[RMDB]
RNA sequence: GGGAACGACUCGAGUAGAGUCGAAAACGGAUUAGGCGUGGAGGCGGAAGUCACCCUCCUCGCAUCGCAAGUUCGUGCUUGCGACUUACACGUAGGGCGAGGGGUGGGCGAAAGUUGCCAUGAGACCAAAAUAUGUAGUUCUUCGGAACUACAUAAACGUCUCUAGGACAUUCGUGUCCUAGAGACGAAAAGAAACAACAACAACAAC
Reactivity to 2A3 in 0.01 (KOAc 150mM, MgCl2 10mM, bicine 150mM(pH8.5), 24C), signal-to-noise 2, nucleotides 027 to 156: c030g070g020a080u120u130a140g010g000c010g000u020g010g010a000g000g040c110g010g000a090a000g060u050c080a150c000c000c000u030c000c010u000c000g020c000a020u000c010g000c000a010a010g100u300u300c130g210u300g060c010u000u020g000c000g000a010c000u070u100a020c120a010c100g230u150a070g000g140g000c010g010a070g030g070g000g040u250g070g000g010c030g050a230a000a000g000u000u020g060c040c060a070u040g040a000g030a050c070c120a020a020a020a020u110a000u000g010u010a020g000u000u030c000u000u050c250g060g000a000a000c000u000a000c000a000u000a020a010a000